[RMDB]
This 177-nucleotide RNA was probed chemically with DMS and 2A3. Values cover nucleotides 27 to 126. The RNA was probed in 150 mM KOAc, 10 mM MgCl2 and 150 mM bicine (pH 8.5) at 24 C.
RNA sequence: GGGAACGACUCGAGUAGAGUCGAAAAGCAGUAUUUAGGCACUACAAGUCCUGAGUGUUUACAGAGAACGGGAAUCUCCCUCAAUGUUCCUGCUCCACAGCCUCUGUGCAUUUCUGAAAAACAGGAGAUCCAGUACUUUUUUCGAAAAGUACUGGAUAAAAGAAACAACAACAACAAC
Reactivity to DMS in 0.01 (KOAc 150mM, MgCl2 10mM, bicine 150mM(pH8.5), 24C), signal-to-noise 8, nucleotides 027 to 126: g020c060a070g010u020a050u010u020u020a050g020g000c070a050c030u020a070c160a080a100g000u010c030c010u020g000a080g010u000g010u010u010u020a050c060a040g000a070g000a120a200c130g000g010g000a060a080u010c080u010c020c010c020u000c090a090a070u030g000u000u000c010c000u000g000c050u010c030c040a070c100a100g000c130c000u000c010u000g010u000g020c070a090u000u010u030c030u000g010a060a070a060a080a100c070a040g020g000a080g010
Reactivity to 2A3 in 0.01 (KOAc 150mM, MgCl2 10mM, bicine 150mM(pH8.5), 24C), signal-to-noise 9, nucleotides 027 to 126: g060c030a020g030u120a130u060u140u140a080g040g010c030a010c030u160a060c070a150a050g070u070c010c020u040g010a040g030u060g030u030u110u080a040c040a010g080a020g010a150a020c060g010g010g040a050a100u040c040u040c040c020c000u050c040a060a090u110g030u040u030c000c000u020g020c010u040c040c020a080c020a040g030c010c010u040c020u050g040u040g030c030a040u030u120u040c040u060g090a060a030a020a020a010c040a030g040g010a060g020